[RMDB]
RNA sequence: GGGAACGACUCGAGUAGAGUCGAAAAUAAUUAUACAGCUAAAUGUUGAGCACAUAAUUAAGUGGAUAAACUUUUGGAAUGCAUGCACAAGUAUAUCUGUUUGUAUAUGUGUGUGUAUAUGUAUAGCCAGCACUAUGGAUUUCGAUCCAUAGUGCUGAAAAGAAACAACAACAACAAC
Reactivity to DMS in 0.01 (KOAc 150mM, MgCl2 10mM, bicine 150mM(pH8.5), 24C), signal-to-noise 2, nucleotides 027 to 126: u010a060a110u010u000a000u000a010c030a060g050c050u020a010a060a070u030g000u020u000g000a270g030c000a050c000a040u010a050a070u030u030a020a060g000u000g000g010a050u000a060a020a020c000u000u000u000u000g010g020a240a100u000g000c090a040u020g000c020a030c010a000a300g050u000a030u000a020u000c110u020g030u000u070u010g020u000a000u000a020u000g000u000g000u000g000u020g000u000a040u000a030u020g000u000a020u010a060g000c200
Reactivity to 2A3 in 0.01 (KOAc 150mM, MgCl2 10mM, bicine 150mM(pH8.5), 24C), signal-to-noise 4, nucleotides 027 to 126: u070a000a040u170u060a040u030a050c020a020g090c080u070a020a060a050u090g020u010u020g030a020g090c010a010c000a010u170a140a140u260u080a230a020g000u010g030g030a050u050a060a060a010c010u080u000u030u030g090g080a170a040u190g030c030a060u060g030c010a020c000a040a070g080u010a020u010a000u070c030u040g160u090u220u170g050u010a020u000a020u090g030u010g030u000g000u010g020u020a080u020a040u170g030u010a040u000a010g080c000